[RMDB]
RNA sequence: GGGAACGACUCGAGUAGAGUCGAAAAUUUGUAUUUUGAAGGUUAAGGAAUCAUUGACACUUAACAAUCUGAUUGCAGCAAUGAUCCUCAUGCUGUCACAACUCAAGUGCAGGGACUUUGGUGCACUUGGUCAUAAUAUCUUCGGAUAUUAUGACCAAAAAGAAACAACAACAACAAC
Reactivity to 2A3 in 0.01 (KOAc 150mM, MgCl2 10mM, bicine 150mM(pH8.5), 24C), signal-to-noise 5, nucleotides 027 to 126: u110u060u100g050u040a160u030u140u050u090g070a070a040g080g000u010u010a010a010g020g050a070a060u110c040a130u090u240g050a050c020a010c120u030u020a030a010c010a020a090u020c060u050g100a150u100u110g000c010a030g010c010a010a060u040g050a210u040c010c000u070c060a080u080g030c010u040g050u130c030a030c020a100a140c030u050c100a060a030g010u010g020c000a000g010g000g050a030c030u100u090u080g070g070u050g010c000a000c020u010
Reactivity to DMS in 0.01 (KOAc 150mM, MgCl2 10mM, bicine 150mM(pH8.5), 24C), signal-to-noise 5, nucleotides 027 to 126: u000u010u000g020u010a070u000u010u000u000g010a080a090g010g000u000u000a020a020g000g000a130a180u000c090a130u020u010g000a090c140a180c030u000u000a030a030c040a050a070u000c050u000g010a100u010u010g020c050a020g020c050a030a040u000g010a080u000c050c040u000c130a150u010g000c050u000g010u010c150a070c170a070a110c120u000c110a040a050g010u000g010c020a070g000g010g010a070c120u000u000u000g000g000u000g010c030a010c150u010
Conditions: 150 mM KOAc, 10 mM MgCl2 and 150 mM bicine (pH 8.5), 24 C.
Chemical mapping of a 177-nucleotide RNA with 2A3 and DMS.
In probing experiments dimethyl sulfate is read out at A N1 and C N3, which are open when not base-paired.
2A3 adducts were read by reverse transcription with SuperScript II with manganese.